[RMDB]
RNA sequence: GGGAACGACUCGAGUAGAGUCGAAAAGGAAUCGACAGUAGAGUGUAUCAUGUCAGUAAGCAUGCCGGGGAGUGGUGGUUUACCCCGUUAUCAAAUGAUUACCGACCAAUAAUUGGCGAAACUCGUUAGGCCCGUCCACACUUCGGUGUGGACGGAAGAUACCCUGCACGUUCGCGUGCAGGGUAUCAAAAGAAACAACAACAACAAC
Reactivity to 2A3 in 0.01 (KOAc 150mM, MgCl2 10mM, bicine 150mM(pH8.5), 24C), signal-to-noise 2, nucleotides 027 to 156: g050g000a020a000u110c010g010a030c020a030g030u140a060g010a030g060u130g030u070a130u120c060a060u150g050u010c030a010g080u170a030a000g030c030a010u060g090c050c000g030g000g010g000a050g000u060g080g060u010g020g080u000u110u100a090c000c000c040c000g070u040u030a050u030c030a090a090a110u080g010a060u080u000a060c010c000g110a120c010c030a000a030u280a110a130u110u150g000g000c120g050a090a040a070c110u090c040g080u020u040a070g050g000c000c010c010g000u000c010c000a000c000a000c020u090u030c270g080g000u000g000u000g060g000a000c000g010g000a000a000
An RNA of 207 nucleotides, treated with 2A3 and read out base by base. The reactions ran in a buffer of 150 mM KOAc, 10 mM MgCl2 and 150 mM bicine (pH 8.5), at 24 C. Source: RMDB library M2RFPK, as collected in RNAgym.